[RMDB]
RNA sequence: GGGAACGACUCGAGUAGAGUCGAAAAUAAAAAGCAGGGUCCUAUUGCCUUAUUGUGAAUGGGCCUCUCGUAAACGUCAGGGAAAUCAAUUGUGUAUUGUUAUUGGGUGAACCACUUGAGUUUUCUCCUUAUUGGAAUUUUUCGAAAUUCCAAUAAGAAAAGAAACAACAACAACAAC
Reactivity to 2A3 in 0.01 (KOAc 150mM, MgCl2 10mM, bicine 150mM(pH8.5), 24C), signal-to-noise 8, nucleotides 027 to 126: u070a000a070a020a020a000g070c060a010g000g030g010u040c000c010u040a090u050u080g120c010c020u290u240a300u190u290g070u100g090a030a050u040g000g000g010c010c010u020c000u000c020g050u030a070a080a070c040g050u030c050a050g020g010g040a010a070a030u070c030a040a080u160u080g070u020g020u120a060u090u080g050u140u070a080u080u100g080g010g000u080g050a060a050c020c010a040c060u030u050g030a020g090u030u010u030u020c000u010c010
Reactivity to DMS in 0.01 (KOAc 150mM, MgCl2 10mM, bicine 150mM(pH8.5), 24C), signal-to-noise 5, nucleotides 027 to 126: u020a050a060a100a080a110g020c120a040g000g000g010u000c010c020u000a090u010u000g010c020c110u020u030a090u010u010g010u020g000a060a150u000g000g000g000c030c010u010c030u010c070g010u010a050a080a070c100g010u010c050a030g010g000g000a060a060a050u020c080a030a080u000u010g020u010g010u020a080u010u010g010u000u000a050u010u000g000g010g010u010g000a070a070c040c030a050c090u000u000g010a080g000u000u000u010u000c010u000c080